[RMDB]
RNA sequence: GGGAACGACUCGAGUAGAGUCGAAAAUUAUGGUGUAACGUCUCUUUCUGCCUUUUUAACUUCUUAUCCAAAAAUGAACAUGGAAGUGAGGCGUGCAUUGGAGCCAGGCAACCCUGCUUCAAGGUUAUUAUUGUGCUUAGAUUCAUCAGGUGGAAAGCUUAGUGACUGGAUUCGUCCAGUCACUAAGAAAAGAAACAACAACAACAAC
Reactivity to 2A3 in 0.01 (KOAc 150mM, MgCl2 10mM, bicine 150mM(pH8.5), 24C), signal-to-noise 3, nucleotides 027 to 156: u150u070a100u200g000g000u020g010u050a080a030c030g100u050c030u000c000u030u050u020c040u060g040c010c000u060u070u000u100u090a040a050c000u040u050c010u040u130a080u160c050c070a020a060a070a050a190u200g040a090a040c030a120u130g080g010a030a040g060u030g060a010g030g000c030g020u020g040c000a040u000u120g040g000a010g060c080c020a030g010g000c030a070a080c000c000c030u010g000c010u030u050c040a040a030g090g020u020u030a040u090u040a070u060u100g030u000g010c000u030u080a030g000a050u080u020c000a060u030c010a080g030g020u050g000g020a050a010a040g000